Chemical mapping of a 177-nucleotide RNA with 2A3 and DMS. 2A3 adducts were read by reverse transcription with SuperScript II with manganese. The data come from the RNA Mapping Database (RMDB), library M2PK90. Conditions: 150 mM KOAc, 10 mM MgCl2 and 150 mM bicine (pH 8.5), 24 C.
RNA sequence: GGGAACGACUCGAGUAGAGUCGAAAAUGAAAGAGUUUCCUUUAACCUAUAUGGAAGCAAAGAUCAAGAAUACAACCUUCCCAUAUGGUUGACUUAAUUAUUCCCAAGGUUCCUGGAAGCUAAAAAACGAGUGAAUAUAGUUCGCUAUAUUCACUCGAAAAGAAACAACAACAACAAC
Reactivity to 2A3 in 0.01 (KOAc 150mM, MgCl2 10mM, bicine 150mM(pH8.5), 24C), signal-to-noise 3, nucleotides 027 to 126: u200g030a040a060a060g120a020g000u010u000u020c000c000u010u060u030a020a000c010c020u030a010u000a020u300g000g020a030a020g010c130a170a050a020g030a030u080c070a050a030g060a240a070u170a130c040a040a030c000c000u040u060c060c020c010a030u070a030u100g010g000u010u000g000a010c000u020u000a030a030u100u050a070u050u040c000c000c020a010a020g030g010u040u000c020c030u040g000g020a010a010g000c010u120a090a120a020a040a010a020
Reactivity to DMS in 0.01 (KOAc 150mM, MgCl2 10mM, bicine 150mM(pH8.5), 24C), signal-to-noise 3, nucleotides 027 to 126: u010g010a100a090a150g010a090g030u000u000u010c020c010u000u000u000a030a010c020c010u000a040u020a150u010g010g010a010a020g000c190a070a080a110g020a060u000c050a060a050g000a100a180u000a110c030a030a090c100c010u000u000c060c020c060a120u010a060u010g000g010u000u000g020a070c040u000u000a020a090u000u000a110u000u000c010c000c090a070a040g010g020u000u000c090c030u000g010g020a050a030g010c020u010a000a020a060a030a040a100